[RMDB]
RNA sequence: GGGAACGACUCGAGUAGAGUCGAAAAUUAAUGGCAUUAAAGUCGAUAUAAAAAUGCAAGAGGGUAAGACAUAUGAUGCCGAUCAGCUUGCUCUGGAGAUAUCUAAUCAAAUAAACCGUAAUGAUGCCCUUAGGAGUCCAUUCGUGGACUCCUAAGGAAAAGAAACAACAACAACAAC
Reactivity to 2A3 in 0.01 (KOAc 150mM, MgCl2 10mM, bicine 150mM(pH8.5), 24C), signal-to-noise 4, nucleotides 027 to 126: u180u170a090a090u130g010g000c000a020u020u060a080a040a160g060u090c040g020a010u020a010u040a150a100a030a010a000u120g020c050a020a020g020a040g060g060g000u070a030a020g050a060c040a000u160a080u170g070a020u130g080c050c050g000a030u030c010a020g090c000u000u040g000c000u020c020u080g050g030a050g010a010u080a010u000c060u100a130a090u100c040a060a030a130u210a200a070a020c080c060g030u080a060a030u130g070a040u070g030c020
Reactivity to DMS in 0.01 (KOAc 150mM, MgCl2 10mM, bicine 150mM(pH8.5), 24C), signal-to-noise 2, nucleotides 027 to 126: u040u030a040a110u000g000g000c020a020u000u000a060a110a200g020u060c140g010a100u000a040u030a000a100a100a120a050u050g000c030a070a070g000a110g080g010g030u020a070a060g030a030c100a060u080a060u040g030a040u020g050c000c080g000a030u020c010a000g000c010u010u000g000c010u000c120u010g020g000a140g010a000u000a040u000c070u010a050a090u020c150a080a080a060u020a010a060a150c040c070g030u030a060a070u020g000a030u050g000c160
The record gives the reactivity of an RNA of 177 nucleotides to 2A3 and DMS. The data come from the RNA Mapping Database (RMDB), library OK1LIB. The 2A3 profile rests on 3,061 reads. The reactions ran in a buffer of 150 mM KOAc, 10 mM MgCl2 and 150 mM bicine (pH 8.5), at 24 C.